[RMDB]
RNA sequence: GGGAACGACUCGAGUAGAGUCGAAAAGUGAGUCCUUACGAGGACUCACAAUAAAUUCAGAGGUAAUUCGACCGCAAAUAUUACCUCUGAUGCGGUCGAAAAAGCUGCUACGUACGCGUAGCAGCAACGAGCUUUUAAUAUUCGUAUUAAAAGCUCGAAAAGAAACAACAACAACAAC
Reactivity to DMS in 0.01 (KOAc 150mM, MgCl2 10mM, bicine 150mM(pH8.5), 24C), signal-to-noise 3, nucleotides 027 to 126: g000u010g010a020g010u000c000c020u000u030a130c160g010a040g040g000a000c000u000c020a000c020a060a040u030a050a090a070u020u020c030a060g000a080g040g000u050a050a130u010u000c060g010a030c030c030g000c020a040a040a120u020a110u020u010a120c050c020u020c040u000g000a080u020g010c060g020g000u010c040g000a010a030a060a070a100g010c000u000g020c000u000a000c000g020u030a080c210g000c000g030u000a000g000c000a000g000c000a010a060
Reactivity to 2A3 in 0.01 (KOAc 150mM, MgCl2 10mM, bicine 150mM(pH8.5), 24C), signal-to-noise 7, nucleotides 027 to 126: g000u000g000a010g000u020c010c000u020u030a090c270g130a020g000g000a000c000u000c000a000c000a000a010u020a000a030a010u130u080c050a030g040a050g150g110u160a110a180u040u010c020g020a020c020c010g020c040a020a070a010u260a130u140u150a100c020c030u050c030u030g010a000u020g000c000g010g000u030c030g010a030a000a000a000a000g000c000u000g000c000u000a000c010g020u020a030c260g000c010g100u000a000g000c000a000g000c000a000a000